RNA sequence: GGGAACGACUCGAGUAGAGUCGAAAAGUUUGUAAUAGUAUCUUUGAAUGACGAUCUGAUUAAGGUCCGUCUCCUCCAUUAGUCCACAAGUUUCGGGGGUACAUCUACUUUGCUCAUUUCCAUAUCAAUCCUCCUAUUUAUUCGUAAAUAGGAGGAUAAAAGAAACAACAACAACAAC
Reactivity to 2A3 in 0.01 (KOAc 150mM, MgCl2 10mM, bicine 150mM(pH8.5), 24C), signal-to-noise 5, nucleotides 027 to 126: g030u060u070u060g050u040a050a080u060a180g090u030a040u040c020u040u070u060g110a120a060u120g000a020c010g010a020u010c010u030g090a290u170u190a070a020g030g000u010c100c050g000u020c030u000c010c000u010c010c000a090u070u080a050g050u050c020c010a070c040a140a060g030u000u050u090c050g010g000g000g000g010u020a020c010a010u010c010u020a040c020u040u020u060g020c010u020c070a040u020u030u010c010c010a030u040a020u190c050a060
Reactivity to DMS in 0.01 (KOAc 150mM, MgCl2 10mM, bicine 150mM(pH8.5), 24C), signal-to-noise 9, nucleotides 027 to 126: g010u000u000u000g010u010a100a080u000a150g010u000a020u000c010u000u000u000g010a100a090u010g010a050c050g010a020u000c010u000g010a150u010u020a100a050g010g000u000c040c080g010u000c010u000c040c030u000c020c030a110u010u010a070g010u010c040c060a060c110a090a110g010u000u000u000c070g010g000g010g000g010u000a030c060a070u000c050u000a040c030u000u000u000g010c080u010c060a110u000u000u000c000c000a090u000a060u000c130a100